Description
Chemical mapping of a 177-nucleotide RNA with 2A3. The data come from the RNA Mapping Database (RMDB), library OK2TRN.
RNA sequence: GGGAACGACUCGAGUAGAGUCGAAAAACUGCUAGUGUCAUGGCACUGCGCUAGCUAGAUACACGAUCCUACUAGCAUGCUGCGCGAUCGUCUCUAGACGUAUGUAUGAUCCUAGCUAGCACCAUGAGGGUCGUGUCGAAUUCGUUCGACACGACCCAAAAGAAACAACAACAACAAC
Reactivity to 2A3 in 0.01 (KOAc 150mM, MgCl2 10mM, bicine 150mM(pH8.5), 24C), signal-to-noise 1, nucleotides 027 to 126: a000c150u230g020c030u010a000g000u000g030u070c000a000u010g150g000c000a090c110u220g030c020g000c030u010a000g000c010u000a000g010a030u170a040c110a010c110g070a010u020c010c000u000a040c030u000a020g000c000a050u200g070c130u140g000c110g020c080g280a300u020c000g010u050c020u060c030u070a090g020a100c000g050u030a020u180g070u000a020u070g010a010u000c000c000u000a010g050c000u000a010g030c000a030c030c010a000u030g010a090